Source: RMDB library M2RFOK, as collected in RNAgym. Chemical mapping of a 207-nucleotide RNA with DMS and 2A3. DMS adducts were read by reverse transcription with MarathonRT. The RNA was probed in 150 mM KOAc, 10 mM MgCl2 and 150 mM bicine (pH 8.5) at 24 C. Reactivities are rounded to 0.1 and cut off at 0 and 3.

RNA sequence: GGGAACGACUCGAGUAGAGUCGAAAAAUCAGAGGGCUCUAUCAUGCAAACUAGGAUUGUCUGCUCAUGCACAGAACCAACUACCGAUAACUAACAGUGCAUGAAGGUUAGUUAUUCCAUAUUAAUUAAAACUCGUAAUUCUUCGGAAUUACGAGAAGAAUGUUCUAAGCUUCGGCUUAGAACAUUCAAAAGAAACAACAACAACAAC
Reactivity to DMS in 0.01 (KOAc 150mM, MgCl2 10mM, bicine 150mM(pH8.5), 24C), signal-to-noise 1, nucleotides 027 to 156: a070u020c010a110g020a090g000g010g010c020u020c020u020a090u000c070a110u000g010c000a110a050a040c140u010a170g030g000a140u010u000g000u000c020u010g010c000u010c060a050u010g020c030a070c000a090g000a060a080c090c040a040a090c130u000a190c030c010g000a110u000a030a080c010u000a050a070c030a120g000u000g020c030a050u010g040a070a070g000g010u010u000a040g000u030u000a030u000u000c050c040a120u000a120u000u030a070a190u000u010a090a090a080a170c020u010c020g010u000a000a030u000u000c000u010u010c300g010g000a020a000u000u000a000c010g000a000g000a020a010
Reactivity to 2A3 in 0.01 (KOAc 150mM, MgCl2 10mM, bicine 150mM(pH8.5), 24C), signal-to-noise 5, nucleotides 027 to 156: a000u060c020a010g050a050g060g020g010c030u000c020u090a120u100c050a020u070g040c060a090a090a050c060u060a050g020g060a090u050u070g030u050c030u040g010c000u000c020a010u030g020c020a010c000a020g090a120a080c050c040a070a070c070u150a120c040c060g040a020u000a030a010c000u000a010a010c020a030g030u010g050c000a030u040g030a020a020g030g000u010u000a000g000u020u000a030u070u050c030c000a030u080a060u260u190a180a090u110u120a060a100a070a070c000u000c000g000u010a000a010u000u000c000u020u030c080g070g000a000a000u000u000a000c000g000a000g000a000a000